[RMDB]
Background:
An RNA of 207 nucleotides, treated with DMS and 2A3 and read out base by base. The RNA was probed in 150 mM KOAc, 10 mM MgCl2 and 150 mM bicine (pH 8.5) at 24 C. For DMS the reverse transcriptase was MarathonRT. It was measured as part of the RMDB library OK3TST.
RNA sequence: GGGAACGACUCGAGUAGAGUCGAAAACAGUCAGCCUUCUCUAAGGGUGGUAAGUCAGUCACCAUUACUGAGGGUGAGUUCGAUGCAAUGGCUGCUUAUCAGAUGCUCUAUAUGUCUGAGCCUUGUGUCUCUGUUAUCAACGGAUCAUCUGGUGCAGUGAACGACGAUAAUUCGUUAUCGUCGUUCAAAAAGAAACAACAACAACAAC
Reactivity to DMS in 0.01 (KOAc 150mM, MgCl2 10mM, bicine 150mM(pH8.5), 24C), signal-to-noise 2, nucleotides 027 to 156: c030a140g010u000c050a280g000c030c000u000u010c020u000c050u000a040a010g010g040g040u000g020g040u000a060a160g010u010c170a150g000u000c010a020c020c010a080u000u000a040c010u000g000a040g030g030g040u000g000a150g020u000u000c060g040a240u000g030c060a090a100u010g030g000c000u000g010c020u010u000a030u010c020a040g010a070u000g020c090u000c020u000a110u000a130u020g010u020c070u010g000a060g000c010c070u000u000g030u010g000u000c060u020c030u010g010u010u000a140u000c090a060a120c050g020g010a040u000c030a030u000c000u000g020g030u000g010c040a080g010
Reactivity to 2A3 in 0.01 (KOAc 150mM, MgCl2 10mM, bicine 150mM(pH8.5), 24C), signal-to-noise 5, nucleotides 027 to 156: c040a010g150u070c010a030g030c000c010u020u010c010u000c000u020a040a050g040g020g010u000g000g030u120a140a090g180u140c070a020g040u050c020a020c020c000a030u030u060a060c020u030g020a020g000g010g000u020g050a040g020u100u130c080g030a040u110g050c050a120a100u140g080g000c000u010g000c010u130u090a030u050c000a010g010a010u010g030c020u030c000u040a070u020a060u270g100u030c040u020g010a020g000c000c000u210u200g070u100g060u070c000u000c010u010g110u100u120a150u130c020a040a030c040g020g000a000u010c000a000u000c010u020g000g020u020g000c000a000g000